[RMDB]
RNA sequence: GGGAACGACUCGAGUAGAGUCGAAAAACAUUGGCCAUUACAACAAGCCACUCAAACGCUUCGAGGCCUAGGAGUGGUGACUAAUCCCCAUAGAAGUUCUAUGAUAUUAGAUUGGAAGGAUCCUGAAUACCGCUUAUCACUUCGGUGAUAAGCGGUAAAAAGAAACAACAACAACAAC
Reactivity to DMS in 0.01 (KOAc 150mM, MgCl2 10mM, bicine 150mM(pH8.5), 24C), signal-to-noise 1, nucleotides 027 to 126: a120c140a110u000u000g000g000c060c010a070u000u020a030c100a050a180c210a040a230g000c000c010a030c000u000c000a030a180a130c200g000c020u000u010c170g040a280g030g010c050c020u000a140g000g000a010g010u000g000g030u000g000a020c030u000a060a020u020c040c130c090c030a060u030a010g000a110a040g000u040u000c000u000a000u000g000a140u030a020u010u000a040g000a160u000u000g010g020a100a060g000g000a100u020c040c100u000g000a180a130

Structure probing data (DMS) for a 177-nucleotide construct. It was measured as part of the RMDB library OK2TST. For DMS the reverse transcriptase was MarathonRT. The RNA was probed in 150 mM KOAc, 10 mM MgCl2 and 150 mM bicine (pH 8.5) at 24 C.